[RMDB]
RNA sequence: GGGAACGACUCGAGUAGAGUCGAAAAGAUAUGGACAUACUUGCAGCAACAGCCUGGUUCGGAAACGAACCAGGACAUGCUGUCAAGAUGUCCUAAGUCAAAAGGGAUGUGGUUCGCCACAUCCCAAGAUAUGUCGGUGGUUCGCCACCGACAUAUCAAAAGAAACAACAACAACAAC
Reactivity to DMS in 0.01 (KOAc 150mM, MgCl2 10mM, bicine 150mM(pH8.5), 24C), signal-to-noise 2, nucleotides 027 to 126: g000a090u010a300u000g010g000a000c000a010u000a200c000u000u000g000c000a010g020c000a070a130c300a250g000c010c010u000g000g000u000u000c030g020g000a140a060a250c010g000a020a010c000c000a030g000g000a020c100a070u010g020c000u000g000u010c020a020a030g000a050u000g000u000c000c010u000a000a060g020u000c030a050a080a110a170g010g000g000a020u000g020u000g000g000u000u000c260g000c010c000a000c000a000u010c000c000c010a000a000
Reactivity to 2A3 in 0.01 (KOAc 150mM, MgCl2 10mM, bicine 150mM(pH8.5), 24C), signal-to-noise 2, nucleotides 027 to 126: g060a010u110a070u150g010g000a000c020a040u290a300c070u020u030g010c010a000g000c000a020a150c030a260g080c000c000u000g000g000u000u010c020g000g100a120a090a110c010g010a010a030c030c000a000g000g000a000c000a020u020g010c000u010g010u150c000a000a000g000a000u000g000u000c000c000u010a100a050g070u080c040a020a010a080a300g020g000g000a010u010g010u020g040g120u110u180c300g030c120c000a000c000a000u020c000c000c000a000a000